[RMDB]
RNA sequence: GGGAACGACUCGAGUAGAGUCGAAAAGAUAUGGAUCACACUGGAGUUUCCCAUUCGGAAACGAAUGUGAGAAACUAUGAAGGUGUGAGUCCUAAGUCAAAGCAGUUACACUUCGGUGUAACUGCAACUAGGAGAUUUAGUUCGCUAAAUCUCCUAGAAAAGAAACAACAACAACAAC
Reactivity to DMS in 0.01 (KOAc 150mM, MgCl2 10mM, bicine 150mM(pH8.5), 24C), signal-to-noise 5, nucleotides 027 to 126: g010a020u000a020u010g000g000a130u000c000a000c000a000c000u000g010g000a010g010u000u000u000c010c010c010a010u000u000c000g020g000a010a010a010c000g010a010a010u000g010u000g020a200g010a020a000a000c000u010a300u000g000a100a180g000g000u010g020u010g000a030g000u010c000c000u000a010a090g000u000c000a110a080a110g010c000a000g010u000u000a000c000a010c000u000u020c200g010g010u000g010u000a000a000c000u000g000c000a010a030
Reactivity to 2A3 in 0.01 (KOAc 150mM, MgCl2 10mM, bicine 150mM(pH8.5), 24C), signal-to-noise 3, nucleotides 027 to 126: g000a000u020a010u030g000g000a000u010c000a000c000a000c010u010g000g040a020g010u020u000u010c010c020c000a000u010u000c010g000g000a000a000a000c010g010a010a000u030g100u110g070a300g020a090a030a010c020u090a300u300g000a000a000g020g010u000g000u000g010a000g000u020c000c000u010a000a000g000u000c020a000a160a040g000c010a000g000u010u010a010c010a000c010u050u190c300g180g000u000g000u000a000a010c000u000g010c010a000a000

An RNA of 177 nucleotides, treated with DMS and 2A3 and read out base by base. Values cover nucleotides 27 to 126. The reactions ran in a buffer of 150 mM KOAc, 10 mM MgCl2 and 150 mM bicine (pH 8.5), at 24 C. 2A3 adducts were read by reverse transcription with SuperScript II with manganese.